[RMDB]
RNA sequence: GGGAACGACUCGAGUAGAGUCGAAAACGUAUGUUCGCAUACGACUGAGGGGUCUAUUCUAUCCCUUGGAUUUAGACAUGCUCUGAAGCCUCCACGGAGCAACAGCUUGUCAGGGACGAAUAGACGGAGGCACCCUGACCGGCCUAUUCGUAGGCAAUCGAUAAUACGUGUUCGCACGUAUUAUCGAAAAAGAAACAACAACAACAAC
Reactivity to DMS in 0.01 (KOAc 150mM, MgCl2 10mM, bicine 150mM(pH8.5), 24C), signal-to-noise 2, nucleotides 027 to 156: c040g010u010a000u000g000u000u000c220g050c000a070u000a040c010g010a170c040u010g020a080g020g010g040g020u020c050u000a080u000u000c040u000a300u010c010c000c020u000u000g050g020a110u000u000u000a090g010a070c060a300u000g020c000u000c020u040g010a060a120g010c060c000u000c020c030a300c060g000g000a070g000c020a050a080c100a070g010c040u010u000g000u000c010a070g080g000g040a110c120g000a040a060u000a070g010a080c040g020g020a050g010g020c020a090c010c020c000u000g000a070c030c030g000g010c000c000u010a040u000u010c110g020u000a040g000g020c020a110a120
Reactivity to 2A3 in 0.01 (KOAc 150mM, MgCl2 10mM, bicine 150mM(pH8.5), 24C), signal-to-noise 6, nucleotides 027 to 156: c020g020u010a000u030g040u060u080c210g010c150a000u010a010c010g050a030c130u110g080a150g010g040g020g000u000c010u020a060u030u010c010u030a090u070c020c020c000u020u110g120g040a100u160u090u090a040g010a040c040a070u070g020c000u000c000u010g060a100a020g020c010c000u000c020c010a010c020g040g010a000g040c010a070a070c040a030g130c080u150u180g080u150c080a090g010g000g020a010c020g040a030a020u040a060g020a030c030g000g010a010g000g000c000a040c010c010c000u030g050a080c040c100g070g000c000c000u020a040u090u110c190g070u070a010g010g010c020a010a070